An RNA of 177 nucleotides, treated with DMS and 2A3 and read out base by base.
The data come from the RNA Mapping Database (RMDB), library OK2TRN.
The 2A3 profile rests on 4,083 reads.
For DMS the reverse transcriptase was MarathonRT.
The RNA was probed in 150 mM KOAc, 10 mM MgCl2 and 150 mM bicine (pH 8.5) at 24 C.
RNA sequence: GGGAACGACUCGAGUAGAGUCGAAAACAGAUGCAGCAAAGGCUUCAUGCAUUCAGGAUGCCUAUUGUUGAUUAAUAGCUACCUGAUCCUAAUAGUAGAAAGGACCACUGUCCAAGUUACUGGAAUAUCUUAAACGUCUUUUCGAAGACGUUUAAGAAAAAGAAACAACAACAACAAC
Reactivity to DMS in 0.01 (KOAc 150mM, MgCl2 10mM, bicine 150mM(pH8.5), 24C), signal-to-noise 7, nucleotides 027 to 126: c120a060g010a070u000g020c040a030g010c050a070a090a110g010g010c040u000u010c040a080u000g010c170a120u000u000c050a040g010g010a140u000g010c150c010u000a060u000u000g000u010u000g000a100u020u010a040a040u000a040g020c030u000a250c030c010u000g010a070u000c010c020u000a060a110u010a070g010u000a050g010a060a100a120g010g010a040c030c220a060c210u010g010u010c010c020a040a110g000u010u000a040c060u000g000g010a080a080u000a110
Reactivity to 2A3 in 0.01 (KOAc 150mM, MgCl2 10mM, bicine 150mM(pH8.5), 24C), signal-to-noise 5, nucleotides 027 to 126: c030a010g070a100u090g050c010a020g000c050a160a080a010g130g000c000u040u040c020a060u070g060c020a080u050u170c020a010g050g020a040u040g020c020c010u050a170u050u050g070u090u110g050a050u050u090a070a060u040a030g000c020u040a090c020c010u010g000a050u030c000c010u070a210a180u050a150g030u010a010g100a100a130a040g020g000a010c030c040a130c280u200g020u000c000c000a050a020g040u050u020a030c020u020g040g060a140a070u110a040